[RMDB]
RNA sequence: GGGAACGACUCGAGUAGAGUCGAAAAUUUCAGCAACGAUAAAAUGGAAGAAGUUCACGACAUAAUCUGCCGAACCACUGAAUUUUUUCCGCAACUCAGGAUUUUGUGUCGCUACACCUACUGGACAGCAUUAUAGUACCUUCGGGUACUAUAAUGCAAAAGAAACAACAACAACAAC
Reactivity to 2A3 in 0.01 (KOAc 150mM, MgCl2 10mM, bicine 150mM(pH8.5), 24C), signal-to-noise 3, nucleotides 027 to 126: u010u030u010c030a030g000c030a050a040c070g040a040u060a210a150a070a070u170g020g000a000a010g030a040a000g050u010u030c050a020c020g030a010c010a050u230a110a110u150c030u120g010c030c030g030a050a080c040c030a050c080u010g020a050a050u020u010u000u000u030u000c000c000g040c030a010a050c030u060c080a030g030g030a120u020u080u030u150g090u020g030u040c010g000c040u060a040c030a020c030c020u080a090c050u050g030g030a020c020a050
Reactivity to DMS in 0.01 (KOAc 150mM, MgCl2 10mM, bicine 150mM(pH8.5), 24C), signal-to-noise 3, nucleotides 027 to 126: u010u010u000c030a070g010c060a080a110c060g000a120u010a030a060a090a060u010g000g010a030a040g020a030a050g020u000u000c020a080c070g010a030c030a030u000a070a100u000c280u010g020c010c010g010a070a100c180c110a120c260u000g000a030a010u000u010u000u000u000u010c010c020g040c160a050a050c060u010c040a060g010g020a050u000u000u000u010g000u000g030u010c040g010c040u000a040c080a040c030c020u000a090c130u000g010g010a080c250a110
An RNA of 177 nucleotides, treated with 2A3 and DMS and read out base by base. The data come from the RNA Mapping Database (RMDB), library OK2TST. Conditions: 150 mM KOAc, 10 mM MgCl2 and 150 mM bicine (pH 8.5), 24 C.